Chemical mapping of a 177-nucleotide RNA with 2A3 and DMS.
The RNA was probed in 150 mM KOAc, 10 mM MgCl2 and 150 mM bicine (pH 8.5) at 24 C.
Values cover nucleotides 27 to 126.
2A3 adducts were read by reverse transcription with SuperScript II with manganese.
RNA sequence: GGGAACGACUCGAGUAGAGUCGAAAAUCGAUCUCUCUCUUUUUCCCAGUUGCCAAAAUCAUGUAAUGGCCGCGUGAGGAAUACGUUGAUCGGUUAUGUAAUUUCUAAUGUAACCGAUCUUUUAUUCGCCAAUUCGUUUAUUCGUAAACGAAUUGGCAAAAGAAACAACAACAACAAC
Reactivity to 2A3 in 0.01 (KOAc 150mM, MgCl2 10mM, bicine 150mM(pH8.5), 24C), signal-to-noise 3, nucleotides 027 to 126: u100c000g020a040u000c020u000c000u020c020u010c010u000u110u020u000u020c000c000c030a070g040u050u040g030c000c010a070a090a040a150u150c060a170u140g090u200a180a060u070g010g000c010c010g030c020g050u080g040a150g020g060a080a030u070a080c110g060u070u040g010a000u000c000g000g000u020u020a010u020g110u000a130a090u030u170u140c130u150a090a000u060g000u030a000a000c000c000g000a000u000c000u000u000u000u020a000u030u040c010
Reactivity to DMS in 0.01 (KOAc 150mM, MgCl2 10mM, bicine 150mM(pH8.5), 24C), signal-to-noise 2, nucleotides 027 to 126: u010c020g010a080u000c020u000c010u000c010u000c010u000u000u000u000u020c010c000c000a180g040u000u000g020c030c050a130a090a200a170u030c080a090u050g000u010a050a170u050g010g000c040c100g020c080g000u000g000a070g010g000a050a080u000a030c150g020u050u000g000a060u010c000g000g000u000u000a000u000g020u000a040a070u040u050u000c180u020a160a030u020g000u000a000a000c000c020g000a010u000c000u000u000u010u010a050u000u010c110